Structure probing data (2A3) for a 207-nucleotide construct. Values cover nucleotides 27 to 156. The 2A3 profile rests on 356 reads. Source: RMDB library M2RFPK, as collected in RNAgym.
[RMDB]
RNA sequence: GGGAACGACUCGAGUAGAGUCGAAAAGUAGAAUCUGUCAAGCAAAACCCCAAAACCUUACACUGAGAGCAUUUAGCCUGAUUACUCUUUAAAUCGAAUCAGGCAAUAGAGAGAAACUCGAGAGGUGAAACGGGAGUAAUGUUCGCAUUACUCCCAACACUUCGAAAGCGUUCGCGCUUUCGAAGUGAAAAGAAACAACAACAACAAC
Reactivity to 2A3 in 0.01 (KOAc 150mM, MgCl2 10mM, bicine 150mM(pH8.5), 24C), signal-to-noise 1, nucleotides 027 to 156: g020u120a060g020a110a090u000c050u130g160u090c100a050a050g020c070a060a030a250a210c020c000c010c000a000a050a090a080c000c030u190u150a020c020a020c180u060g010a010g000a020g030c000a090u070u030u090a050g110c100c000u000g050a000u030u100a240c050u030c070u050u260u280a020a230a070u170c070g000a010a000u000c000a000g000g000c000a010a010u000a000g050a000g000a000g000a020a130a050c010u010c020g110a180g010a020g090g010u050g070a080a030a050c070g000g000g000a000g000u000a010a010u000g000u020u140c200g000c130a000u000u000a000c000u000c000c000c000a000a000